[RMDB]
An RNA of 207 nucleotides, treated with 2A3 and read out base by base.

RNA sequence: GGGAACGACUCGAGUAGAGUCGAAAAGCCACACGGAAAGUUUGCAGCCGCAAGUAUCAAGGAGGGGAUUUCCAAAUGGUGGCACUGCAAUAGAUCCCCCGAUGCUUUGACAAUACAGCUCGGUUUCCGUAUAGUUACGUAAGUUAGCAGAAUAGCACUAGGAUAUCUCGUUCGCGAGAUAUCCUAGAAAAGAAACAACAACAACAAC
Reactivity to 2A3 in 0.01 (KOAc 150mM, MgCl2 10mM, bicine 150mM(pH8.5), 24C), signal-to-noise 1, nucleotides 027 to 156: g000c010c000a030c000a050c050g020g030a030a040a040g020u090u140u160g050c090a000g080c020c050g060c100a030a000g040u070a060u060c010a080a070g130g000a090g000g040g020g020a000u000u060u090c070c000a090a050a000u200g050g040u030g020g000c000a020c060u000g000c020a010a100u060a210g020a010u000c020c000c000c000c020g000a000u020g000c000u060u130u060g000a030c010a010a000u150a170c020a040g050c020u000c000g020g000u000u000u010c000c020g000u000a040u060a090g070u040u090a070c140g030u060a040a070g060u070u200a010g040c030a000g110a190a050u110a120g010c030a000
For 2A3 the reverse transcriptase was SuperScript II with manganese.